[RMDB]
RNA sequence: GGGAACGACUCGAGUAGAGUCGAAAAGGGGUCGUCCACAUCGAUCGGAUGAUGGAGCAACAGCCCACUGAAGCCUCCACGGUGGGACAUGCUCCAUAUCCGGGAGUGGACGACGGAGGCACCCAAAGUGCAAACCUCGUUCGCGAGGUUUGCACAAGGGUGGAAGUAGGUUCGCCUACUUCCACCCAAAAGAAACAACAACAACAAC
Reactivity to 2A3 in 0.01 (KOAc 150mM, MgCl2 10mM, bicine 150mM(pH8.5), 24C), signal-to-noise 1, nucleotides 027 to 156: g030g020g090g000u000c000g000u000c000c010a050c050a210u300c060g160a140u040c010g020g000a000u120g020a040u040g070g000a000g000c080a040a220c100a230g010c020c000c000a000c000u030g030a220a030g060c000c000u040c010c000a010c040g010g000u030g000g050g040a040c040a080u300g000c000u000c000c000a010u000a000u020c000c000g000g050g000a020g010u030g010g000a000c000g000a000c000g000g000a000g020g000c000a060c000c040c040a000a190a000g000u050g000c000a000a000a020c000c010u000c000g010u040u000c090g010c000g180a000g000g000u010u000u010g000c000a010c000a040a010